RNA sequence: GGGAACGACUCGAGUAGAGUCGAAAAGAUAUGGAUGUAUGUAGCUAGCUUAGUCGGAAACGACAGAGCUUGGACCUACUACAUCCUAAGUCAAAGCAUCUUUCAGAGUUCGCUCUGAAAGAUGCAAGUCCUGUUAUUCGUUCGCGAAUAACAGGACAAAAGAAACAACAACAACAAC
Reactivity to DMS in 0.01 (KOAc 150mM, MgCl2 10mM, bicine 150mM(pH8.5), 24C), signal-to-noise 3, nucleotides 027 to 126: g010a020u020a300u010g000g000a030u000g000u000a020u060g010u000a020g020c100u000a000g000c010u000u000a180g010u000c000g000g010a120a010a110c000g040a000c000a300g010a000g010c000u000u010g030g000a110c280c010u010a000c020u000a000c000a000u000c000c000u000a010a040g010u000c010a070a180a160g000c000a010u000c000u000u010u010c000a000g000a000g010u010u010c300g010c010u000c010u010g000a030a010a000g010a010u000g020c010a020a040
Reactivity to 2A3 in 0.01 (KOAc 150mM, MgCl2 10mM, bicine 150mM(pH8.5), 24C), signal-to-noise 2, nucleotides 027 to 126: g020a000u060a030u110g020g030a000u000g010u050a040u280g020u010a030g020c060u010a000g000c010u040u030a070g000u000c010g010g020a060a050a030c020g000a010c060a060g020a000g000c000u000u150g110g100a090c020c010u000a010c000u000a010c000a010u010c000c000u010a080a010g040u020c040a190a010a010g000c000a000u000c010u010u000u000c000a000g000a030g030u060u150c250g100c080u000c010u000g000a010a000a000g000a000u010g000c000a000a010

This 177-nucleotide RNA was probed chemically with DMS and 2A3. The RNA was probed in 150 mM KOAc, 10 mM MgCl2 and 150 mM bicine (pH 8.5) at 24 C. DMS adducts were read by reverse transcription with MarathonRT. It was measured as part of the RMDB library TTRDEL.